[RMDB]
RNA sequence: GGGAACGACUCGAGUAGAGUCGAAAAAGCGCUUACGAGCGCACCUGGCAAUGAUGACCCACUUGCCCUCACUGAGAACAAAGUUCGGUAAUGAGAACCUUUGUUGACUCGAGUUCUGAGCCAGGAAAGGGUUAUUCAACUUCGGUUGAAUAACCCUAAAAGAAACAACAACAACAAC
Reactivity to DMS in 0.01 (KOAc 150mM, MgCl2 10mM, bicine 150mM(pH8.5), 24C), signal-to-noise 1, nucleotides 027 to 126: a020g000c010g000c000u040u010a070c130g050a000g010c050g000c040a000c000c000u000g000g060c000a150a020u020g000a070u060g000a100c010c000c000a170c160u000u020g020c030c000c020u000c000a070c100u040g000a120g010a010a000c000a000a010a000g000u000u000c020g000g060u000a210a100u070g000a260g000a060a000c210c110u000u000u000g000u000u050g070a020c000u000c000g000a060g000u000u040c060u000g000a300g010c000c010a020g000g000a100a240
Reactivity to 2A3 in 0.01 (KOAc 150mM, MgCl2 10mM, bicine 150mM(pH8.5), 24C), signal-to-noise 3, nucleotides 027 to 126: a000g020c030g000c030u040u110a000c280g080a020g000c000g000c020a040c000c000u000g010g000c030a060a060u120g050a050u180g040a150c000c000c030a040c050u020u180g070c020c020c020u000c010a140c030u090g030a020g010a060a000c020a000a000a030g010u000u010c020g140g100u300a130a150u260g090a090g000a210a020c000c010u000u030u000g010u020u050g050a030c000u000c030g000a000g000u110u000c000u060g030a030g060c040c000a010g000g000a000a100
An RNA of 177 nucleotides, treated with DMS and 2A3 and read out base by base. The reactions ran in a buffer of 150 mM KOAc, 10 mM MgCl2 and 150 mM bicine (pH 8.5), at 24 C. In probing experiments dimethyl sulfate is read out at A N1 and C N3, which are open when not base-paired. Source: RMDB library RFM100, as collected in RNAgym.